[RMDB]
RNA sequence: GGGAACGACUCGAGUAGAGUCGAAAAAAUACAGGCUCUUCCAUCCAACUCCUAUUCCAACACGUCCUCGUCGUACAGAGUGGUAACAUGUGUCACCACAUAUCCAAGCUUGGGUACACGGGCUUGAAAAAGUUAGAGCGCUUCGGCGCUCUAACAAGAUACUGCUUUGCUUCGGCAAAGCAGUAUCAAAAGAAACAACAACAACAAC
Reactivity to 2A3 in 0.01 (KOAc 150mM, MgCl2 10mM, bicine 150mM(pH8.5), 24C), signal-to-noise 1, nucleotides 027 to 156: a000a000u260a040c070a000g040g000c000u020c030u050u010c000c010a070u050c030c010a020a030c020u000c010c000u040a030u030u080c020c010a040a010c030a010c050g040u000c000c030u050c020g050u050c060g040u080a040c000a100g050a030g080u040g040g030u060a040a010c030a090u100g100u070g090u130c060a020c050c030a010c010a010u120a030u040c030c000a060a000g010c050u040u030g080g000g020u060a050c030a070c060g000g000g000c000u040u030g000a010a100a020a000a000g000u000u000a000g010a000g030c010g010c010u010u020c210g110g000c000g000c000u010c000u000a000a000c000a000a000